[RMDB]
RNA sequence: GGGAACGACUCGAGUAGAGUCGAAAAGCUGCCUCGUCAUCGGUGAUCAGACCGAACACAUCGGGUUCAGCGUGCGCAAUCGGAGCCGUCACAGGAGCAACGGUGACCGCGGCGGUGACAAGGAGAAUCCUUAGGAGUCCUUCGGGACUCCUAAGGAAAAAGAAACAACAACAACAAC
Reactivity to DMS in 0.01 (KOAc 150mM, MgCl2 10mM, bicine 150mM(pH8.5), 24C), signal-to-noise 1, nucleotides 027 to 126: g030c080u000g000c220c020u000c100g000u000c000a080u000c010g000g080u030g060a010u000c030a270g010a030c020c000g000a030a080c200a070c170a100u030c180g000g000g000u000u000c080a110g010c060g080u000g030c100g000c050a200a040u010c170g000g030a300g000c080c140g050u010c050a120c110a210g030g020a090g000c050a070a020c040g000g000u000g000a040c110c050g030c130g000g000c000g010g000u000g000a090c090a050a040g000g030a140g000a180a060

An RNA of 177 nucleotides, treated with DMS and read out base by base. DMS adducts were read by reverse transcription with MarathonRT. Source: RMDB library OK2TST, as collected in RNAgym. The RNA was probed in 150 mM KOAc, 10 mM MgCl2 and 150 mM bicine (pH 8.5) at 24 C. For DMS, 558 sequencing reads were counted.